RNA sequence: GGGAACGACUCGAGUAGAGUCGAAAAGGGGCUGACAGGAAUCGACAGUAGUGUGUAUCAUGUCAGUAAGCAUGCCGGGGAAUGGUGGUUUACCCCGUUAUCAAAUGAUUACCGACCAAUAAUUGGCUUAGCUCGUUGGGCUUCGGCCCAACGAGAACUAGUCAUUCUGAUUCGUCAGAAUGACUAGAAAAGAAACAACAACAACAAC
Reactivity to DMS in 0.01 (KOAc 150mM, MgCl2 10mM, bicine 150mM(pH8.5), 24C), signal-to-noise 2, nucleotides 027 to 156: g010g010g020g030c010u020g020a080c030a090g020g010a040a090u000c020g000a060c000a080g020u010a130g000u000g020u010g020u000a160u000c030a070u000g010u000c020a070g020u000a040a120g020c030a070u010g040c080c030g010g000g000g000a080a080u000g000g000u000g010g030u020u000u000a170c010c000c000c010g000u000u000a020u000c300a070a090a050u000g010a090u000u000a040c020c010g010a040c040c040a030a120u000a050a110u000u000g000g000c020u000u010a090g010c000u010c000g010u000u000g040g030g000c000u000u000c290g060g010c000c010c010a000a000c000g010a000g020a010a120
Reactivity to 2A3 in 0.01 (KOAc 150mM, MgCl2 10mM, bicine 150mM(pH8.5), 24C), signal-to-noise 8, nucleotides 027 to 156: g010g000g030g000c020u030g020a010c030a020g050g060a070a110u110c070g070a040c050a050g160u240a080g040u070g020u020g010u100a070u120c030a030u050g020u020c010a020g040u050a040a010g050c040a030u110g040c030c000g000g000g000g010a030a030u050g020g000u010g000g010u020u020u110a050c010c000c000c000g040u040u030a020u030c030a020a020a050u050g040a040u080u070a020c000c030g080a080c050c040a020a050u260a150a080u110u060g060g010c060u100u100a020g020c000u000c000g000u000u000g000g000g010c010u030u040c190g060g000c000c000c000a000a000c000g000a000g000a000a000